[RMDB]
RNA sequence: GGGAACGACUCGAGUAGAGUCGAAAACGCACGCACGCAAAUCCCCUUGCAGCUGGCGUGGGCUCUGACGGUGCACCGCGUUCAGGGCAUGACGCUUCCGAUGGCGCGGGUGGAAAUUAACAGGAGCUCAUACCGCGUCCUUCGGGACGCGGUAUGAAAAAGAAACAACAACAACAAC
Reactivity to 2A3 in 0.01 (KOAc 150mM, MgCl2 10mM, bicine 150mM(pH8.5), 24C), signal-to-noise 2, nucleotides 027 to 126: c090g010c000a020c030g070c000a030c030g030c080a030a070a150u070c000c020c000c030u000u080g000c000a040g040c020u110g040g000c020g070u110g000g030g030c030u000c000u020g090a090c060g020g010u170g000c010a040c160c020g020c040g030u200u130c010a000g010g000g000c020a020u100g080a010c060g010c000u160u050c020c050g080a100u120g020g000c030g010c090g050g040g050u040g030g000a080a150a070u180u000a200a020c050a070g030g000a020g030c010
Reactivity to DMS in 0.01 (KOAc 150mM, MgCl2 10mM, bicine 150mM(pH8.5), 24C), signal-to-noise 1, nucleotides 027 to 126: c100g000c070a040c170g040c000a020c140g060c090a040a000a060u030c000c000c010c170u020u020g060c010a230g000c050u000g000g010c000g010u050g000g030g000c000u000c000u000g000a100c120g030g000u020g000c060a200c000c040g000c000g010u010u000c070a100g060g000g000c010a160u020g000a080c030g000c080u010u060c090c030g090a170u020g000g000c000g030c010g000g000g030u010g000g000a030a050a050u040u030a110a010c140a090g040g000a090g080c080
This 177-nucleotide RNA was probed chemically with 2A3 and DMS.